[RMDB]
RNA sequence: GGGAACGACUCGAGUAGAGUCGAAAAAAGGACAGCAGCAGGCGCGAAACUUGCCCAAUUGGAGAGAGGCAGUUAUGAGACGUAUAUUUUGUAACCGGGGUAGAAUACCGGUGAUUGACUGGAGGGCCUAAAUUGCUUAGUUCGCUAAGCAAUUUAGAAAAGAAACAACAACAACAAC
Reactivity to 2A3 in 0.01 (KOAc 150mM, MgCl2 10mM, bicine 150mM(pH8.5), 24C), signal-to-noise 2, nucleotides 027 to 126: a000a000g080g020a030c010a020g000c030a010g000c010a020g070g000c020g000c010g060a060a040a020c010u030u090g030c000c010c000a070a100u140u070g060g020a070g010a000g000a020g010g030c010a000g000u010u050a100u100g050a030g020a010c000g030u040a070u020a030u180u130u050u170g040u050a020a000c010c000g030g030g000g000u060a090g120a190a040u060a110c020c000g050g010u010g000a000u030u050g000a010c020u030g020g020a030g010g010g000c000
Reactivity to DMS in 0.01 (KOAc 150mM, MgCl2 10mM, bicine 150mM(pH8.5), 24C), signal-to-noise 3, nucleotides 027 to 126: a080a040g000g000a090c060a080g030c030a070g010c050a050g010g030c050g000c050g000a080a050a080c080u000u000g000c010c020c020a100a130u010u000g010g000a100g000a070g010a090g010g020c030a040g010u000u000a040u010g000a120g010a050c080g020u010a070u010a090u010u000u000u000g000u010a130a020c020c020g000g000g010g020u000a060g000a070a100u020a070c040c010g000g020u000g000a070u010u000g010a060c060u000g000g000a060g000g000g010c160
The record gives the reactivity of an RNA of 177 nucleotides to 2A3 and DMS.
For 2A3 the reverse transcriptase was SuperScript II with manganese.
For DMS the reverse transcriptase was MarathonRT.
It was measured as part of the RMDB library RFMREP.
The RNA was probed in 150 mM KOAc, 10 mM MgCl2 and 150 mM bicine (pH 8.5) at 24 C.
For 2A3, 2,219 sequencing reads were counted.
For DMS, 3,519 sequencing reads were counted.